This 207-nucleotide RNA was probed chemically with DMS and 2A3. The DMS profile rests on 6,720 reads. For 2A3, 6,161 sequencing reads were counted.

RNA sequence: GGGAACGACUCGAGUAGAGUCGAAAAGAUCUGCGCCGAUCCGAAACGAUAGCAAACAGCCCGCAUCAUGUCGUCUCCUAACUUCGACGUGGUGAAAUACUGAGCUUAUGCGAGUAAGCCUGUUAGCAAUAGAUCAGAACGUUCGCGUUCUGAUCAACAUAAGGUAAGCGUUCGCGCUUACCUUAUGAAAAGAAACAACAACAACAAC
Reactivity to DMS in 0.01 (KOAc 150mM, MgCl2 10mM, bicine 150mM(pH8.5), 24C), signal-to-noise 3, nucleotides 027 to 156: g010a090u000c010u000g030c060g010c030c050g010a090u000c040c030g020a070a090a120c080g000a100u010a050g020c040a070a060a150c100a130g010c000c050c030g000c010a060u000c010a040u000g020u010c000g010u000c090u000c110c060u010a120a110c070u000u000c000g010a010c020g050u000g010g010u010g030a050a070a090u010a090c070u010g020a100g020c030u000u000a090u000g010c250g000a270g000u000a020a030g000c010c020u010g000u000u000a130g000c100a080a150u000a070g050a030u000c000a010g010a020a020c000g020u000u020c280g060c040g010u000u010c000u000g010a010u000c000a030a110
Reactivity to 2A3 in 0.01 (KOAc 150mM, MgCl2 10mM, bicine 150mM(pH8.5), 24C), signal-to-noise 6, nucleotides 027 to 156: g030a040u020c020u070g030c030g010c050c050g040a040u020c050c050g060a080a050a030c060g060a080u110a060g030c040a060a060a090c020a040g040c000c020c000g040c000a010u000c000a000u020g010u010c000g030u010c050u110c070c080u120a150a180c060u070u030c020g010a000c000g010u000g000g000u030g020a040a030a000u200a050c040u040g010a010g010c000u010u030a010u070g070c030g010a050g060u010a010a010g010c000c020u090g040u110u100a050g000c050a110a120u060a160g010a000u000c000a010g000a010a010c010g010u060u070c220g010c000g110u000u010c020u010g000a000u000c000a000a000
Annotation:
For DMS the reverse transcriptase was MarathonRT. The RNA was probed in 150 mM KOAc, 10 mM MgCl2 and 150 mM bicine (pH 8.5) at 24 C. Source: RMDB library M2RFPK, as collected in RNAgym.